Chemical mapping of a 207-nucleotide RNA with DMS and 2A3. The DMS profile rests on 6,030 reads. Conditions: 150 mM KOAc, 10 mM MgCl2 and 150 mM bicine (pH 8.5), 24 C.
RNA sequence: GGGAACGACUCGAGUAGAGUCGAAAAAGUCAGCUAUUACGAUAGGUGACAUUUGAACCAGCGAACAAUUCAGUUGCGAGAUUCGAGGUUUCAGUCUGAAUCAUAGUAGCCAUUACGAUGGCUACAACUCACUCCCGACUGUUCGCAGUCGGGAGAAUCAGUUAACCUAGUUCGCUAGGUUAACUGAAAAAGAAACAACAACAACAAC
Reactivity to DMS in 0.01 (KOAc 150mM, MgCl2 10mM, bicine 150mM(pH8.5), 24C), signal-to-noise 3, nucleotides 027 to 156: a100g020u000c000a050g000c010u000a010u000u000a130c210g030a080u000a030g000g010u010g020a030c010a130u010u000u000g000a120a190c010c010a110g020c040g010a030a080c040a170a140u000u000c020a130g020u000u000g010c030g010a070g000a050u000u010c000g020a210g030g000u000u010u000c040a110g000u000c050u000g010a050a060u000c140a110u010a140g000u000a010g010c000c010a000u000u010a120c250g050a120u000g000g020c000u000a000c010a020a040c080u000c020a140c000u010c010c010c000g030a050c000u000g030u000u000c250g060c010a010g010u000c000g010g000g000a010g000a000a010
Reactivity to 2A3 in 0.01 (KOAc 150mM, MgCl2 10mM, bicine 150mM(pH8.5), 24C), signal-to-noise 8, nucleotides 027 to 156: a000g010u010c010a020g020c040u010a020u040u090a070c200g070a020u010a020g130g080u010g010a020c030a050u100u050u160g060a050a020c000c000a020g160c010g000a000a000c010a060a130u010u000c000a000g000u000u010g000c000g010a000g000a000u010u000c000g000a020g020g060u110u180u300c030a030g140u070c010u000g000a010a010u040c030a040u070a070g000u000a000g000c010c000a000u030u060a050c220g130a030u020g010g000c000u000a000c000a000a000c010u090c050a060c000u000c000c010c000g000a000c000u020g040u070u090c230g000c130a000g000u000c000g000g000g000a000g000a000a000